[RMDB]
RNA sequence: GGGAACGACUCGAGUAGAGUCGAAAAGAGGCUCGCUACAAUGGGCGAAAAAGGAUCCAAAUUCUAGAUUGUGGCAGGUGCCAGACAUAUAUGACAUGGCAAGAUCAUCAGGGUGCACGCCCAUUCACGUACCAUAGGCAUUCGUGCCUAUGGUACGAAAAGAAACAACAACAACAAC
Reactivity to DMS in 0.01 (KOAc 150mM, MgCl2 10mM, bicine 150mM(pH8.5), 24C), signal-to-noise 3, nucleotides 027 to 126: g000a130g010g010c030u000c010g020c150u010a020c130a040a060u000g020g010g000c080g000a030a040a060a130a120g000g000a090u030c030c030a070a100a090u000u010c060u000a060g000a050u010u000g020u000g000g000c010a050g000g010u000g000c000c000a000g000a110c190a050u000a070u080a070u000g000a100c080a100u010g030g000c060a050a020g000a110u020c050a040u020c150a100g000g000g050u000g000c060a050c080g000c030c000c030a150u010u010c090a250
Reactivity to 2A3 in 0.01 (KOAc 150mM, MgCl2 10mM, bicine 150mM(pH8.5), 24C), signal-to-noise 4, nucleotides 027 to 126: g100a020g060g000c010u010c030g010c010u080a040c050a070a090u070g000g000g020c050g080a070a020a000a000a110g110g030a030u010c040c030a060a070a000u130u030c030u070a060g030a230u020u120g030u050g070g000c040a040g060g100u060g090c020c030a030g050a010c050a020u240a000u050a060u180g040a040c050a060u080g030g020c030a040a020g030a070u030c020a010u030c040a060g070g000g000u070g060c040a000c050g010c000c000c020a000u030u060c070a020
The data come from the RNA Mapping Database (RMDB), library OK1LIB. An RNA of 177 nucleotides, treated with DMS and 2A3 and read out base by base. The reactions ran in a buffer of 150 mM KOAc, 10 mM MgCl2 and 150 mM bicine (pH 8.5), at 24 C. The DMS profile rests on 3,486 reads.